[RMDB]
RNA sequence: GGGAACGACUCGAGUAGAGUCGAAAACUUUGCUCUGCAAAGACUAUUUCAACUACUUUGCAUAGUCAGGUGUCAAUUUCCAGGAGGCGGCAAGUCGGAGCAGAGCUGAUACAUGGCCAAAGACCCUUGACCUCAGCCGCUCAGCAGGCCUCAGCAAAGCUACGUAAUGAUUCGUCAUUACGUAGCUAAAAGAAACAACAACAACAAC
Reactivity to DMS in 0.01 (KOAc 150mM, MgCl2 10mM, bicine 150mM(pH8.5), 24C), signal-to-noise 3, nucleotides 027 to 156: c050u000u000u000g030c000u000c040u000g000c000a010a040a040g000a050c030u000a060u000u010u010c120a040a040c020u000a040c000u000u000u010g010c020a050u000a040g000u000c170a070g020g010u000g030u010c040a060a160u000u000u000c030c010a230g000g010a090g030g030c030g030g050c090a080a120g010u010c010g000g020a120g030c030a090g000a130g050c000u000g000a090u010a090c110a170u000g030g060c030c010a060a140a160g000a110c090c040c090u010u010g000a070c060c070u000c020a030g030c000c000g000c000u000c020a100g030c000a120g010g010c000c000u000c020a090g000c050a100a140
Reactivity to 2A3 in 0.01 (KOAc 150mM, MgCl2 10mM, bicine 150mM(pH8.5), 24C), signal-to-noise 6, nucleotides 027 to 156: c000u050u030u040g000c000u010c030u060g000c010a010a010a030g030a080c060u170a220u120u290u200c100a120a050c030u170a050c010u050u020u020g010c020a020u010a010g000u030c040a000g030g000u040g050u060c070a120a160u010u080u000c010c010a040g090g020a010g000g030c040g010g010c110a110a060g090u160c080g110g010a000g000c040a040g040a040g030c000u000g000a000u020a040c080a060u090g010g000c030c050a090a070a070g070a220c030c000c010u030u050g040a050c000c030u020c010a010g010c000c010g010c010u000c010a020g010c010a010g090g090c000c000u020c030a050g050c080a130a130
An RNA of 207 nucleotides, treated with DMS and 2A3 and read out base by base.
Source: RMDB library OK3TST, as collected in RNAgym.
For 2A3, 4,324 sequencing reads were counted.
DMS adducts were read by reverse transcription with MarathonRT.